[RMDB]
Notes: The record gives the reactivity of an RNA of 207 nucleotides to 2A3. The reactions ran in a buffer of 150 mM KOAc, 10 mM MgCl2 and 150 mM bicine (pH 8.5), at 24 C.

RNA sequence: GGGAACGACUCGAGUAGAGUCGAAAAUCUAGUUUUUUCACAGAAGUGGGAGCAGAAGUUGAUGCUAUAUAAGGAAAGUAUAGACUCAGUACAAAUGCUUUUGGAGUUUGUAAUAAGUGGAGAAAAGUAGUAAGAAGAUGAGAGAGAUAGAGAAAGACGUACCGUCACUGUUCGCAGUGACGGUACGAAAAGAAACAACAACAACAAC
Reactivity to 2A3 in 0.01 (KOAc 150mM, MgCl2 10mM, bicine 150mM(pH8.5), 24C), signal-to-noise 1, nucleotides 027 to 156: u050c090u050a080g010u040u080u020u050u000u110c110a100c000a010g120a130a030g090u130g030g000g030a010g000c130a030g010a050a010g020u070u080g070a030u060g000c030u070a000u020a020u010a150a070g060g050a030a030a090g010u030a080u000a030g040a050c000u000c030a010g000u010a040c040a010a130a030u020g020c000u130u180u100u120g040g010a020g000u000u060u150g010u080a070a000u100a190a040g000u030g010g000a000g000a030a070a040a000g030u020a010g000u040a130a000g020a040a000g020a040u080g000a000g000a000g000a000g030a030u030a080g050a000g020a020a130a000g030a000